RNA sequence: GGGAACGACUCGAGUAGAGUCGAAAACGGCGCGCGACAUCGUCGAUGAGAUAUGUAAGCCCUUGUGGUACAGGAGUUUUAGAACGAUUUGCGAAGAAUUCCUGCAACCAGUCGCGGGACUUGCCGAUACACAAUGCCGCUUCGGCGGCAUUGUGUAAAAAGAAACAACAACAACAAC
Reactivity to DMS in 0.01 (KOAc 150mM, MgCl2 10mM, bicine 150mM(pH8.5), 24C), signal-to-noise 1, nucleotides 027 to 126: c020g040g000c010g000c020g000c030g000a030c020a090u020c120g000u000c000g010a160u010g010a300g000a020u000a040u010g030u000a070a150g010c000c000c000u000u010g040u000g000g000u000a100c000a000g000g010a070g000u000u000u000u020a130g000a090a080c100g020a170u000u020u000g010c010g020a250a040g000a000a010u000u000c010c000u000g010c070a030a020c020c000a120g040u010c110g040c040g020g030g000a100c100u020u010g010c020c060g040a270

About this RNA:
Structure probing data (DMS) for a 177-nucleotide construct. The reactions ran in a buffer of 150 mM KOAc, 10 mM MgCl2 and 150 mM bicine (pH 8.5), at 24 C.